Structure probing data (DMS and 2A3) for a 177-nucleotide construct. For 2A3, 2,211 sequencing reads were counted. The DMS profile rests on 4,903 reads. For DMS the reverse transcriptase was MarathonRT. Conditions: 150 mM KOAc, 10 mM MgCl2 and 150 mM bicine (pH 8.5), 24 C. Values are in units of 0.01, from 0 to 300, in steps of 10.
[RMDB]
RNA sequence: GGGAACGACUCGAGUAGAGUCGAAAAUGACCUUCUCCACUCCAGUUGGCAAGGGUCCAGGUGAGUCUCCCACCCUCCCAGUGCACAGCGAGAUUUCAGGUUUUGUUUCUAGACCCUGAUUGCCAUGCAAUGGCCCUUGUUUCGACAAGGGCCAUUGAAAAGAAACAACAACAACAAC
Reactivity to DMS in 0.01 (KOAc 150mM, MgCl2 10mM, bicine 150mM(pH8.5), 24C), signal-to-noise 4, nucleotides 027 to 126: u000g010a090c030c020u000u000c050u000c010c030a110c070u010c070c110a090g020u010u010g030g050c140a140a070g020g000g020u010c030c120a050g000g010u010g000a090g020u000c030u010c010c020c010a240c030c010c050u000c010c000c010a130g010u000g010c080a040c080a070g010c040g010a100g010a080u010u010u000c030a020g000g010u000u000u000u000g010u000u000u010c030u000a090g010a070c060c000c010u000g010a090u000u000g020c010c030a070u000g010
Reactivity to 2A3 in 0.01 (KOAc 150mM, MgCl2 10mM, bicine 150mM(pH8.5), 24C), signal-to-noise 1, nucleotides 027 to 126: u110g020a020c010c000u010u010c020u000c040c010a050c020u030c050c020a130g030u090u010g030g010c030a060a080g030g000g000u030c020c020a010g010g030u090g070a030g020u000c030u000c000c000c010a030c000c000c000u030c000c000c010a050g020u040g040c050a000c000a080g040c040g040a040g010a070u040u100u080c010a010g000g030u010u030u070u080g080u000u110u000c020u010a040g040a090c000c010c010u000g030a100u000u190g000c030c010a010u070g000